[RMDB]
RNA sequence: GGGAACGACUCGAGUAGAGUCGAAAAUCAAACGAUUUCGAUCGUUUGAAACGGACCACUCCUGCGGGAGUUAAGGCCAUACGGACAGCCGGGUCCACUGCCAGUCAUUCGGUUUCGACCGAAUGAACACUUCUUCUCCCUUCGGGGAGAAGAAGUGAAAAGAAACAACAACAACAAC
Reactivity to 2A3 in 0.01 (KOAc 150mM, MgCl2 10mM, bicine 150mM(pH8.5), 24C), signal-to-noise 1, nucleotides 027 to 126: u000c000a020a010a000c000g000a000u050u080u140c220g090a030u000c000g030u010u010u000g030a020a010a020c050g000g000a000c000c000a010c000u020c010c000u040g000c220g080g000g000a000g000u010u180a120a110g000g010c000c010a060u060a070c110g040g040a020c020a000g000c000c000g000g060g000u000c000c000a010c030u000g010c020c000a020g110u000c000a000u010u010c000g000g020u020u050u140c280g090a020c010c010g000a000a000u000g000a010a000
Reactivity to DMS in 0.01 (KOAc 150mM, MgCl2 10mM, bicine 150mM(pH8.5), 24C), signal-to-noise 1, nucleotides 027 to 126: u000c000a030a000a010c010g000a000u000u000u010c170g030a020u000c000g000u010u000u000g000a010a070a110c220g010g000a020c010c010a060c000u000c000c000u000g030c180g010g000g000a030g010u010u000a020a030g000g020c000c000a100u000a100c200g020g010a020c040a270g000c000c000g000g020g000u000c000c000a070c160u010g000c020c000a060g000u000c010a000u000u000c000g010g000u000u000u020c150g000a040c010c000g010a010a000u000g000a010a140